[RMDB]
RNA sequence: GGGAACGACUCGAGUAGAGUCGAAAACUUUAACCGAAACAUUGGGGAUCCUCUCACAUCCGCCAUUGCAGAUGUUAAAAGAUAUGUACUUGCAAAGAUGUUACCAAAAUGGGUCUUGAAGAACCUGCGAUGCUCCUAUAUUCGUAUAGGAGCAUCGAAAAGAAACAACAACAACAAC
Reactivity to 2A3 in 0.01 (KOAc 150mM, MgCl2 10mM, bicine 150mM(pH8.5), 24C), signal-to-noise 2, nucleotides 027 to 126: c000u000u080u120a020a010c010c020g050a090a030a050c030a030u040u070g000g000g020g040a000u010c000c020u070c020u050c030a040c000a070u010c020c080g160c070c060a060u050u080g000c020a020g020a140u090g050u080u090a060a110a060a020g120a040u110a040u190g040u050a030c020u060u060g040c060a030a030a030g010a030u050g030u100u130a060c030c000a000a040a070a160u090g000g000g000u020c020u030u070g070a080a050g040a080a100c010c010u000g000
Reactivity to DMS in 0.01 (KOAc 150mM, MgCl2 10mM, bicine 150mM(pH8.5), 24C), signal-to-noise 3, nucleotides 027 to 126: c100u000u000u000a040a070c030c030g010a300a240a130c080a050u000u010g020g010g010g020a060u000c120c050u010c070u000c110a080c170a070u000c010c030g010c060c090a060u010u000g020c000a020g020a200u010g010u010u010a030a050a060a110g010a080u000a040u010g000u000a050c060u000u000g020c060a070a060a080g010a070u000g000u000u000a080c040c020a050a030a070a140u000g010g020g000u000c030u010u020g000a100a110g020a060a070c040c040u000g050
This 177-nucleotide RNA was probed chemically with 2A3 and DMS. The RNA was probed in 150 mM KOAc, 10 mM MgCl2 and 150 mM bicine (pH 8.5) at 24 C. The 2A3 profile rests on 1,697 reads. For DMS, 1,925 sequencing reads were counted. 2A3 adducts were read by reverse transcription with SuperScript II with manganese. As a SHAPE reagent, 2A3 marks flexible, mostly unpaired nucleotides at the ribose 2'-OH.